[RMDB]
RNA sequence: GGGAACGACUCGAGUAGAGUCGAAAACGGCGUAAUCCAGUUUUUAUGUAAGCGAUAGUCUGUCAUCACUGUAGCAACUGGAAUAUUAAUGUUAAAUUGCUCAGUUAGUACCGACAUAACUGGUGUAUCGUGGCUAAACUUUCGAGUUUAGCCACGAAAAAGAAACAACAACAACAAC
Reactivity to 2A3 in 0.01 (KOAc 150mM, MgCl2 10mM, bicine 150mM(pH8.5), 24C), signal-to-noise 2, nucleotides 027 to 126: c010g010g000c000g040u010a010a030u000c010c000a020g000u000u000u020u000u130a140u130g080u100a000a160g060c070g040a040u110a050g030u030c090u030g010u000c020a040u040c000a060c000u020g190u280a020g000c050a000a030c170u210g010g100a020a010u060a070u030u140a050a230u100g010u030u060a110a210a020u020u020g000c010u000c020a000g000u000u050a020g000u070a050c000c050g010a010c000a000u020a000a010c020u010g040g000u000g020u030a020
Reactivity to DMS in 0.01 (KOAc 150mM, MgCl2 10mM, bicine 150mM(pH8.5), 24C), signal-to-noise 2, nucleotides 027 to 126: c090g010g000c060g000u000a090a060u010c020c020a010g000u000u000u010u000u010a070u020g000u020a060a070g020c200g000a050u010a050g040u000c010u010g010u020c110a050u060c190a020c020u000g080u110a030g000c030a000a010c060u020g000g000a060a120u000a170u020u050a170a080u020g020u020u000a030a030a090u000u000g080c080u000c000a000g000u000u020a090g010u080a060c010c000g000a040c070a000u000a070a010c010u000g000g000u000g000u000a200
The data come from the RNA Mapping Database (RMDB), library OK1LIB. Chemical mapping of a 177-nucleotide RNA with 2A3 and DMS. For DMS, 2,302 sequencing reads were counted. For 2A3 the reverse transcriptase was SuperScript II with manganese.